[RMDB]
RNA sequence: GGGAACGACUCGAGUAGAGUCGAAAAGAUAUGGACGGAAAUGAGGUUGCGAUGUAGACAUGUCGAUGGGUCGGAAACGACCCUACCGACAACAGCUACCUCGCAACCUCAUUUCCGUCCUAAGUCAGAGUAUAUAGACCUUCGGGUCUAUAUACUCAAAAGAAACAACAACAACAAC
Reactivity to DMS in 0.01 (KOAc 150mM, MgCl2 10mM, bicine 150mM(pH8.5), 24C), signal-to-noise 1, nucleotides 027 to 126: g010a020u010a300u020g010g000a020c000g000g010a000a000a010u000g050a020g000g010u000u000g000c010g010a020u000g020u000a010g030a060c110a270u010g010u020c000g020a030u000g000g020g050u010c000g000g000a070a070a240c020g010a000c000c000c000u000a020c090c020g000a020c020a050a070c300a140g000c000u000a000c000c070u000c010g000c000a010a000c000c000u000c010a000u000u020u000c000c000g010u000c000c010u000a030a050g000u000c080a150